[RMDB]
RNA sequence: GGGAACGACUCGAGUAGAGUCGAAAACGGCAAAAAAGCAAACCUGACCACCAAGGAUAAAAGAGAUCUUAUCCAAGGAUGCAAAAGAUAAUCUCACUUUUGACACCCACUGAUCUCGAACUUAAAGAAAACCGAGACUACUUCGGUAGUCUCGGAAGCCGUAGAAAGAGUUCGCUCUUUCUACGGCAAAAGAAACAACAACAACAAC
Reactivity to 2A3 in 0.01 (KOAc 150mM, MgCl2 10mM, bicine 150mM(pH8.5), 24C), signal-to-noise 1, nucleotides 027 to 156: c010g060g000c050a000a010a040a040a110a120g050c050a110a030a000c010c000u050g020a060c020c000a010c040c020a020a040g050g000a020u100a070a020a020a000g010a000g000a000u000c010u030u060a040u080c030c010a040a050g020g020a030u020g000c010a030a050a020a000g020a030u150a140a160u190c060u070c100a020c040u030u030u030u070g100a060c010a060c020c030c000a040c090u020g000a000u020c010u000c000g000a060a030c060u140u140a170a090a080g080a040a100a020a000c010c000g020a010g010a010c000u000a000c000u000u000c020g050g020u000a030g000u000c000u000c000g000g000a000a000